[RMDB]
RNA sequence: GGGAACGACUCGAGUAGAGUCGAAAAAGCGCCGGUACGCCGGCGCACACUUGGAUGAGGCGCACUAUUUUGUGAAUACUGCCAAAAUAAUGACCUUAUCCAAGGAGAGCUCAGCUACGGCUGAGCAGACCUACUCCACAUUCGUGUGGAGUAGGUCAAAAGAAACAACAACAACAAC
Reactivity to DMS in 0.01 (KOAc 150mM, MgCl2 10mM, bicine 150mM(pH8.5), 24C), signal-to-noise 1, nucleotides 027 to 126: a080g020c070g000c030c000g000g040u040a100c200g000c020c000g000g010c000g000c010a030c000a010c010u000u000g000g000a000u050g010a000g000g000c020g030c000a020c090u000a000u000u000u000u000g010u060g040a160a090u040a170c230u080g040c040c080a000a000a000a040u000a000a010u000g010a270c000c000u020u000a040u000c000c050a000a010g000g010a210g000a200g000c000u000c000a000g000c030u000a150c110g000g020c000u000g060a020g000c000a010
Reactivity to 2A3 in 0.01 (KOAc 150mM, MgCl2 10mM, bicine 150mM(pH8.5), 24C), signal-to-noise 5, nucleotides 027 to 126: a000g030c010g000c010c010g020g010u090a050c300g030c030c000g000g020c000g010c000a000c000a000c000u000u010g020g000a000u000g010a000g000g020c150g000c190a000c010u010a010u010u010u020u010g120u130g070a160a110u210a300c100u200g120c040c000a010a000a000a000u020a010a030u030g000a030c000c010u000u000a010u000c000c000a000a000g000g000a110g010a000g000c000u000c000a000g000c000u010a050c240g080g000c000u000g000a000g020c000a000
Chemical mapping of a 177-nucleotide RNA with DMS and 2A3.